[RMDB]
RNA sequence: GGGAACGACUCGAGUAGAGUCGAAAAGACGGAUUCUUCGGAAUCCGUCAAAGUGACGCUGAAAAAUGGCCAAUGCGCCAGCUACCACCGACACAGGGCGCAAAACUGGAGUGUUCGCACUCCAGAACAUUAACUUUGCGUUCGCGCAAAGUUAAUGAAAAGAAACAACAACAACAAC
Reactivity to DMS in 0.01 (KOAc 150mM, MgCl2 10mM, bicine 150mM(pH8.5), 24C), signal-to-noise 3, nucleotides 027 to 126: g010a040c000g010g000a000u000u000c010u000u010c180g020g010a000a000u000c000c000g020u000c000a020a020a060g010u010g000a090c070g010c000u000g000a040a040a070a070a120u010g010g000c000c040a090a110u000g010c050g000c000c010a120g000c060u020a070c070c050a230c010c020g010a070c070a040c120a300g010g000g000c040g020c050a010a050a070a260c000u000g010g000a020g030u000g000u000u020c170g000c000a010c000u000c000c000a010g010a060a070
Reactivity to 2A3 in 0.01 (KOAc 150mM, MgCl2 10mM, bicine 150mM(pH8.5), 24C), signal-to-noise 2, nucleotides 027 to 126: g010a000c010g000g000a010u000u010c020u020u100c210g030g000a000a000u000c010c010g010u000c010a010a010a000g010u000g050a020c050g000c070u040g060a030a070a020a040a120u150g080g000c030c020a130a160u110g030c010g000c050c000a020g000c020u040a070c010c050a040c030c020g040a010c020a010c010a120g020g030g040c020g000c000a050a060a000a060c000u000g020g000a000g010u010g010u050u070c190g000c040a000c000u000c000c010a010g000a000a000

The record gives the reactivity of an RNA of 177 nucleotides to DMS and 2A3. Conditions: 150 mM KOAc, 10 mM MgCl2 and 150 mM bicine (pH 8.5), 24 C. The 2A3 profile rests on 2,994 reads. It was measured as part of the RMDB library M2PK50. In probing experiments dimethyl sulfate is read out at A N1 and C N3, which are open when not base-paired. For 2A3 the reverse transcriptase was SuperScript II with manganese.